[RMDB]
This 177-nucleotide RNA was probed chemically with DMS and 2A3.
Values cover nucleotides 27 to 126.
For 2A3 the reverse transcriptase was SuperScript II with manganese.
RNA sequence: GGGAACGACUCGAGUAGAGUCGAAAAGAUAUGGACGUCAGAGGGAGACGUGAUAUCGGAAACGAUAUCCGUCGAGGAUCUCUACGUCCUAAGUCAAAAGAGGGUUAGCGUUCGCGCUAACCCUCAACAUACGAGCAAUGUUCGCAUUGCUCGUAUGAAAAGAAACAACAACAACAAC
Reactivity to DMS in 0.01 (KOAc 150mM, MgCl2 10mM, bicine 150mM(pH8.5), 24C), signal-to-noise 3, nucleotides 027 to 126: g010a000u010a070u010g000g010a000c000g010u000c300a020g010a030g010g000g010a020g010a020c000g000u010g010a010u000a000u010c000g010g010a030a020a020c010g000a010u000a000u000c000c000g020u000c000g010a100g010g010a040u010c010u000c000u000a010c000g010u010c000c000u010a000a070g000u000c010a130a080a130a130g000a020g020g010g010u000u000a010g010c000g020u010u010c260g010c010g010c000u000a000a000c000c000c000u000c010a010a040
Reactivity to 2A3 in 0.01 (KOAc 150mM, MgCl2 10mM, bicine 150mM(pH8.5), 24C), signal-to-noise 2, nucleotides 027 to 126: g020a000u020a000u040g000g000a000c030g020u130c260a020g000a010g010g020g010a070g010a010c040g120u250g030a010u000a000u000c000g000g000a000a010a010c000g000a000u000a000u000c010c000g000u000c000g000a070g020g010a010u000c000u000c000u000a000c020g000u000c000c010u000a000a000g010u010c000a000a020a120a170g000a010g000g010g000u000u010a000g000c010g020u080u070c300g020c000g000c190u000a000a000c010c000c000u000c000a000a000